Chemical mapping of a 207-nucleotide RNA with DMS and 2A3. For 2A3, 1,342 sequencing reads were counted. The DMS profile rests on 1,937 reads. Conditions: 150 mM KOAc, 10 mM MgCl2 and 150 mM bicine (pH 8.5), 24 C.
[RMDB]
RNA sequence: GGGAACGACUCGAGUAGAGUCGAAAAUCGGCAGCCCAGGCCACUUGCUCAGGCACACUCUCGUGCGUGGCGUCAAUGAACAGCAGGUCGCGCAGCUUGAGCUGCAUACGCUGCUCGUCGGCGAGGCUGGUGUCCAGCAUGUACUGAAGCUGGAAGCGCUACAUUCUGACUUCGGUCAGAAUGUAGCAAAAGAAACAACAACAACAAC
Reactivity to DMS in 0.01 (KOAc 150mM, MgCl2 10mM, bicine 150mM(pH8.5), 24C), signal-to-noise 1, nucleotides 027 to 156: u000c100g020g000c020a060g020c040c010c000a110g020g020c000c040a050c060u000u000g040c050u040c020a100g120g080c040a080c020a070c080u010c110u000c040g030u010g000c020g060u010g000g000c030g050u000c010a090a090u000g010a030a070c030a040g070c100a120g050g000u010c050g050c110g050c010a070g040c010u010u000g000a180g030c000u020g010c010a180u000a090c040g000c000u000g020c010u000c070g050u000c010g010g020c000g000a190g010g000c000u000g030g020u000g000u000c000c010a020g010c010a210u020g030u000a220c100u030g010a050a180g020c020u000g000g020a020a110g010c100
Reactivity to 2A3 in 0.01 (KOAc 150mM, MgCl2 10mM, bicine 150mM(pH8.5), 24C), signal-to-noise 3, nucleotides 027 to 156: u100c010g030g070c000a000g050c010c020c000a000g160g000c050c000a060c000u060u080g030c030u040c140a050g070g030c070a050c000a000c000u170c000u020c080g050u070g130c060g080u090g020g010c030g030u130c100a090a200u200g090a140a110c020a020g050c020a020g000g170u180c010g000c030g010c130a040g000c010u250u300g130a140g020c020u020g000c020a030u070a130c080g010c080u000g000c000u040c050g050u040c030g000g020c020g010a010g000g030c080u090g060g070u040g020u030c010c010a000g020c000a000u060g020u010a080c040u120g100a080a010g000c010u000g000g080a070a020g080c040